Conditions: 150 mM KOAc, 10 mM MgCl2 and 150 mM bicine (pH 8.5), 24 C.
Structure probing data (DMS and 2A3) for a 177-nucleotide construct.

RNA sequence: GGGAACGACUCGAGUAGAGUCGAAAAAUCGUCAAGUGCCGAGGUAGAAGAACACCGCACCGUCCGUGUCCUGGAGAUGGUGGAAGAUUGGUUGCACAGAGGACCGAAGGAAUUCUGCAUCAAAGUGCAUUAAGCAAGUCUUCGGACUUGCUUAAUGAAAAGAAACAACAACAACAAC
Reactivity to DMS in 0.01 (KOAc 150mM, MgCl2 10mM, bicine 150mM(pH8.5), 24C), signal-to-noise 7, nucleotides 027 to 126: a050u010c050g010u010c050a060a110g010u000g010c020c030g000a070g000g030u010a060g010a100a100g000a090a060c110a080c040c040g010c040a060c050c030g010u000c030c040g010u010g010u010c020c020u000g000g010a130g000a040u010g000g020u000g000g000a050a050g000a080u020u010g010g000u010u010g020c060a080c070a080g010a100g000g000a110c030c070g010a080a070g000g030a070a140u010u010c030u020g010c050a060u010c060a080a080a100g010u010g010
Reactivity to 2A3 in 0.01 (KOAc 150mM, MgCl2 10mM, bicine 150mM(pH8.5), 24C), signal-to-noise 6, nucleotides 027 to 126: a000u080c030g040u040c040a060a050g050u050g080c030c030g050a050g050g050u080a060g050a200a010g040a080a000c020a010c030c020g050c020a020c000c010g050u020c000c010g040u030g070u080c010c040u070g020g040a100g010a060u080g030g040u030g010g070a050a020g030a070u040u070g050g000u050u100g030c050a030c020a050g060a070g050g030a030c000c040g070a070a010g040g020a010a040u140u020c010u050g020c030a030u050c100a180a060a080g100u130g090
It was measured as part of the RMDB library OK1LIB.